An RNA of 177 nucleotides, treated with DMS and read out base by base. The DMS profile rests on 893 reads. Conditions: 150 mM KOAc, 10 mM MgCl2 and 150 mM bicine (pH 8.5), 24 C.

RNA sequence: GGGAACGACUCGAGUAGAGUCGAAAAAAAGAAGACCCUGUUGAGCUUGACUCUAGUCUGAUAUUGCAUAGUGACCUAAAAGGUGUAGAAUAGGUGGGAGGGGCAACCCGACGGUGAAAUACCACCCCUUAUGCCAUACGUUCGCGUAUGGCAUAAGAAAAGAAACAACAACAACAAC
Reactivity to DMS in 0.01 (KOAc 150mM, MgCl2 10mM, bicine 150mM(pH8.5), 24C), signal-to-noise 1, nucleotides 027 to 126: a080a090a130g000a160a100g000a080c010c040c060u010g000u000u000g030a110g020c060u000u030g000a100c060u000c020u010a060g010u010c060u020g020a060u010a050u020u000g000c040a110u010a100g000u010g000a080c040c040u010a070a080a100a020g000g010u000g010u020a080g000a060a030u000a030g040g000u000g000g000g000a180g000g040g000g010c050a020a050c000c020c040g000a080c200g000g010u000g010a050a090a110u010a030c040c030a190c020c020c050